RNA sequence: GGGAACGACUCGAGUAGAGUCGAAAAGAUAUGGACCGAUGAACUACGCUUUAAAUGAGCAACAGCAGAUAAGGCUCGGAAACGAGCCUUAUCUGACAUGCUCGGUAAAGCGCAUCGGUCCUAAGUCCUGCUUAUACGUGUUCGCACGUAUAAGCAGAAAAGAAACAACAACAACAAC
Reactivity to DMS in 0.01 (KOAc 150mM, MgCl2 10mM, bicine 150mM(pH8.5), 24C), signal-to-noise 1, nucleotides 027 to 126: g000a120u020a190u000g010g000a010c000c000g000a010u000g020a100a090c240u020a300c060g000c000u000u000u000a020a090a110u000g000a000g000c010a030a060c230a190g010c030a010g010a010u000a000a000g020g040c000u000c000g000g000a080a040a220c030g030a030g030c000c000u000u000a000u000c010u000g030a010c060a230u000g010c000u000c010g000g010u000a000a000a010g020c000g000c000a000u000c000g000g000u000c000c000u000a010a040g000u000c020
Structure probing data (DMS) for a 177-nucleotide construct.
The RNA was probed in 150 mM KOAc, 10 mM MgCl2 and 150 mM bicine (pH 8.5) at 24 C.
For DMS, 1,471 sequencing reads were counted.
Reactivities are given for positions 27 through 126.
Source: RMDB library TTRINS, as collected in RNAgym.